[RMDB]
RNA sequence: GGGAACGACUCGAGUAGAGUCGAAAAACGAGGUGCAAUUGUCUUAGUAUUGCGAUCAUUUGUCUCACGUUGCGAAACUCCGAAGAUGUGGCUGACGCAACAUUGAGAACUGGACAAUAAGAGCAUGGGGAAGAUCACUCAUACGCCCUGUGCAGCAUAUUACUCACUGGUUCGCCAGUGAGUAAUAAAAAGAAACAACAACAACAAC
Reactivity to 2A3 in 0.01 (KOAc 150mM, MgCl2 10mM, bicine 150mM(pH8.5), 24C), signal-to-noise 6, nucleotides 027 to 156: a000c070g020a070g010g090u090g030c020a040a030u020u020g030u040c030u160u300a080g010u120a120u100u180g060c060g040a030u040c040a110u060u160u210g050u020c000u000c000a020c050g000u000u000g000c010g060a160a080a090c010u000c020c040g070a150a070g110a270u240g100u240g140g010c090u010g020a120c020g010c010a000a000c010a040u050u140g000a010g000a010a030c030u030g000g010a000c010a020a040u080a100a080g040a000g080c000a000u000g000g000g020g020a050a100g040a120u120c040a060c130u090c060a080u100a180c060g010c020c010c020u000g000u000g000c000a010g020c000a010
Reactivity to DMS in 0.01 (KOAc 150mM, MgCl2 10mM, bicine 150mM(pH8.5), 24C), signal-to-noise 3, nucleotides 027 to 156: a060c040g020a130g010g000u010g010c020a100a070u000u020g010u000c000u010u010a110g030u010a080u010u020g020c020g000a080u000c010a200u000u000u010g020u000c020u000c020a080c140g010u000u000g000c010g030a140a100a090c040u000c060c040g010a150a180g010a150u000g030u000g040g010c050u010g020a260c040g010c000a010a030c010a090u000u000g010a080g010a050a090c050u010g020g010a050c050a030a070u010a080a100g000a160g030c020a030u000g010g000g010g020a120a040g000a120u000c050a090c080u000c070a110u000a070c050g000c030c010c000u000g020u000g030c010a040g000c030a150
About this RNA
The record gives the reactivity of an RNA of 207 nucleotides to 2A3 and DMS. DMS adducts were read by reverse transcription with MarathonRT. High 2A3 reactivity points to a flexible backbone, as in loops and unpaired stretches. The RNA was probed in 150 mM KOAc, 10 mM MgCl2 and 150 mM bicine (pH 8.5) at 24 C. Reactivities are rounded to 0.1 and cut off at 0 and 3. For 2A3 the reverse transcriptase was SuperScript II with manganese.